[RMDB]
RNA sequence: GGGAACGACUCGAGUAGAGUCGAAAAGAAGAGACCGCCACGAGGAGUCAGGGUUCAGACACGAUCCAAGAGAACACGGUUACACUGACUGUGCAGCGGAAGAGGCAAAGAGAGUGGCGGAAGAGAAACCCUAAUGCUCCUUCGGGAGCAUUAGGGUAAAAGAAACAACAACAACAAC
Reactivity to DMS in 0.01 (KOAc 150mM, MgCl2 10mM, bicine 150mM(pH8.5), 24C), signal-to-noise 1, nucleotides 027 to 126: g000a120a040g000a130g000a100c000c000g010c000c000a060c050g000a160g000g000a000g000u000c100a000g030g040g040u000u090c280a050g010a000c040a040c060g000a090u050c040c080a210a070g050a150g000a040a060c060a120c040g010g000u010u010a030c080a070c070u000g080a040c020u040g060u040g010c000a070g000c060g020g000a080a010g030a100g000g040c160a080a110a140g000a060g010a270g000u010g030g000c000g000g000a000a030g000a140g000a080a050
Reactivity to 2A3 in 0.01 (KOAc 150mM, MgCl2 10mM, bicine 150mM(pH8.5), 24C), signal-to-noise 2, nucleotides 027 to 126: g190a080a040g090a000g020a000c010c000g000c000c000a020c050g000a060g180g020a000g040u000c000a000g000g020g000u100u140c040a000g000a080c000a000c100g020a000u040c040c030a140a030g170a040g030a070a000c050a000c030g000g010u020u060a030c060a020c000u000g020a000c030u040g000u020g200c010a010g080c000g030g050a040a000g150a000g080g030c040a070a050a010g270a000g010a030g020u010g000g000c030g020g000a030a000g000a000g000a000a210
Annotation
An RNA of 177 nucleotides, treated with DMS and 2A3 and read out base by base. For 2A3, 913 sequencing reads were counted. Reactivities are given for positions 27 through 126. Source: RMDB library OK1LIB, as collected in RNAgym. The RNA was probed in 150 mM KOAc, 10 mM MgCl2 and 150 mM bicine (pH 8.5) at 24 C.